[RMDB]
RNA sequence: GGGAACGACUCGAGUAGAGUCGAAAACAUAAUGACUUCGGUCAUUAUGAAAUAAAGGCAGUCGAGUGCGCGGGGCACAGUCACGCGCUGACGCCACGACAAAAAUCGGGACCUUCGGGUCCCGAAAGUACAUGUAUGUGUUCGCACAUACAUGUACAAAAGAAACAACAACAACAAC
Reactivity to 2A3 in 0.01 (KOAc 150mM, MgCl2 10mM, bicine 150mM(pH8.5), 24C), signal-to-noise 4, nucleotides 027 to 126: c000a010u020a020a000u010g010a010c000u020u050c200g070g010u000c000a000u000u010a000u010g010a020a010a000u180a040a060a020g040g010c080a060g050u020c020g100a070g180u170g020c010g010c010g020g020g020g000c050a060c050a300g020u040c010a020c010g020c010g000c010u020g000a000c010g000c010c010a040c040g110a030c080a000a090a030a010a020u060c010g010g000g010a000c000c010u050u080c230g120g000g000u000c000c000c000g000a000a010a000
Reactivity to DMS in 0.01 (KOAc 150mM, MgCl2 10mM, bicine 150mM(pH8.5), 24C), signal-to-noise 4, nucleotides 027 to 126: c010a010u000a000a000u000g000a020c000u000u010c180g020g010u010c000a000u000u000a000u000g000a050a100a070u010a070a070a110g030g020c010a080g020u000c010g030a120g030u010g000c020g030c030g010g000g010g000c030a100c200a100g010u000c020a040c020g000c020g000c010u000g000a010c020g000c000c000a040c070g000a070c090a030a080a060a090a100u000c010g000g010g000a020c000c000u000u000c210g010g020g010u000c000c000c000g000a000a000a040
An RNA of 177 nucleotides, treated with 2A3 and DMS and read out base by base. The reactions ran in a buffer of 150 mM KOAc, 10 mM MgCl2 and 150 mM bicine (pH 8.5), at 24 C.